[RMDB]
RNA sequence: GGGAACGACUCGAGUAGAGUCGAAAAGAUGCUAGGAGUAGGCGGCGACCGAAGCGAGGAGGAAAGCAAAGAAAGCCACGGGGCUAGCGAGUGGAUGUUCCGCCCCAAGGGGAGCCGAGUGAGGCUUGAUGUAAUGCUAGUUCGCUAGCAUUACAUCAAAAGAAACAACAACAACAAC
Reactivity to DMS in 0.01 (KOAc 150mM, MgCl2 10mM, bicine 150mM(pH8.5), 24C), signal-to-noise 2, nucleotides 027 to 126: g010a100u000g000c040u010a100g010g000a070g010u000a030g000g050c050g010g000c090g000a090c090c040g000a090a060g000c080g000a060g020g010a090g030g000a080a070a140g020c090a020a100a110g000a100a090a140g000c020c070a090c080g010g010g020g000c030u000a110g040c040g010a050g010u000g000g020a090u000g000u000u010c030c010g000c020c000c000c050a120a090g010g000g010g010a080g010c010c010g040a120g010u010g000a080g000g030c040u000u030
Reactivity to 2A3 in 0.01 (KOAc 150mM, MgCl2 10mM, bicine 150mM(pH8.5), 24C), signal-to-noise 2, nucleotides 027 to 126: g040a020u110g020c050u050a070g010g040a060g050u100a060g060g010c010g000g030c030g050a040c010c030g030a040a030g040c030g020a010g000g030a030g000g090a160a030a020g070c070a090a000a060g090a100a090a010g030c040c010a010c050g040g020g020g000c000u040a020g030c050g040a030g060u110g050g050a070u120g060u060u010c030c020g010c000c020c010c010a020a040g010g000g000g000a000g000c000c000g060a050g060u070g020a040g020g000c010u030u000
Structure probing data (DMS and 2A3) for a 177-nucleotide construct. Reactivities are given for positions 27 through 126. For DMS, 1,270 sequencing reads were counted.